[RMDB]
Background: The data come from the RNA Mapping Database (RMDB), library TTRDEL. An RNA of 177 nucleotides, treated with DMS and 2A3 and read out base by base. High DMS reactivity at an A or C suggests that its Watson-Crick edge is free. The reactions ran in a buffer of 150 mM KOAc, 10 mM MgCl2 and 150 mM bicine (pH 8.5), at 24 C.
RNA sequence: GGGAACGACUCGAGUAGAGUCGAAAAGAUAUGGAAAACCUCGAUAAGUCGGUAUCGGAAACGAUACACGACUUUUGACGAGGUUCCUAAGUCAAAACUUUGAUGGGCCUUCGGGCCCAUCAAAGAACCACUACUUAGGGUUCGCCCUAAGUAGUGGAAAAGAAACAACAACAACAAC
Reactivity to DMS in 0.01 (KOAc 150mM, MgCl2 10mM, bicine 150mM(pH8.5), 24C), signal-to-noise 2, nucleotides 027 to 126: g000a050u000a300u010g020g010a070a050a080a090c000c000u000c020g020a180u000a010a000g010u000c000g010g000u000a010u010c000g020g010a130a080a170c000g030a020u000a010c000a080c000g010a020c000u000u000u010u000g000a200c110g000a010g000g020u000u000c000c010u000a050a140g020u010c050a050a090a090a150c000u010u000u000g000a010u000g000g000g020c000c000u000u010c250g040g000g010c000c010c000a000u000c000a000a010a000g000a090a220
Reactivity to 2A3 in 0.01 (KOAc 150mM, MgCl2 10mM, bicine 150mM(pH8.5), 24C), signal-to-noise 1, nucleotides 027 to 126: g000a040u070a070u130g010g030a080a150a140a290c000c000u000c020g000a090u020a100a010g010u040c020g020g030u000a000u000c010g010g000a100a070a000c000g010a000u010a010c040a090c080g010a000c040u020u020u000u000g060a060c000g000a010g000g000u010u000c020c000u030a070a020g020u020c060a030a020a200a300c000u000u010u010g010a000u000g050g010g110c050c080u070u040c300g200g000g000c040c010c000a000u020c010a010a010a000g000a000a000